[RMDB]
RNA sequence: GGGAACGACUCGAGUAGAGUCGAAAAACACUACGUAUUCGUACGUAGUGUAAAAAACCUUUGUGGACGUCGAUAAGCUCCCGUGGCCCAUUGGGCCACCCGAGCUUUUGACGACGGCCACUCUGGUAAAAAACUACUAAACUUCGGUUUAGUAGAAUGUUAAUACCACUUUCGAGUGGUAUUAACAAAAAGAAACAACAACAACAAC
Reactivity to DMS in 0.01 (KOAc 150mM, MgCl2 10mM, bicine 150mM(pH8.5), 24C), signal-to-noise 1, nucleotides 027 to 156: a050c000a010c010u010a020c000g020u010a020u000u000c300g020u010a000c020g040u010a040g000u000g020u010a000a070a090a110a040a010c010c010u000u000u010g030u000g010g000a000c000g000u000c010g020a200u000a070a060g010c020u000c000c010c040g020u000g020g050c000c000c000a300u000u010g100g040g090c010c010a010c000c000c030g000a000g000c010u000u000u010u020g040a230c040g020a000c000g020g000c000c000a000c020u000c020u000g030g010u000a000a040a090a100a080a110c000u000a010c020u000a000a010a010c000u000u000c300g090g030u030u000u010a000g010u010a000g010a060a040
Reactivity to 2A3 in 0.01 (KOAc 150mM, MgCl2 10mM, bicine 150mM(pH8.5), 24C), signal-to-noise 2, nucleotides 027 to 156: a000c000a000c000u000a000c000g000u000a030u050u140c150g040u080a020c000g000u000a000g000u000g000u000a010a000a000a010a000a000c020c010u030u000u020g010u010g000g000a000c000g000u010c010g010a060u000a070a020g000c000u000c000c020c030g000u000g000g000c000c000c150a300u110u300g020g000g010c000c000a000c010c010c000g000a000g000c000u020u010u040u050g010a020c010g000a000c000g000g000c000c000a000c030u000c000u000g000g000u020a190a090a000a030a030a000c000u010a000c000u000a000a000a000c010u020u090c290g120g020u010u010u000a000g000u000a000g010a030a020
The data come from the RNA Mapping Database (RMDB), library RNAMAK. Structure probing data (DMS and 2A3) for a 207-nucleotide construct. The 2A3 profile rests on 1,770 reads. For 2A3 the reverse transcriptase was SuperScript II with manganese. The RNA was probed in 150 mM KOAc, 10 mM MgCl2 and 150 mM bicine (pH 8.5) at 24 C. The DMS profile rests on 2,706 reads.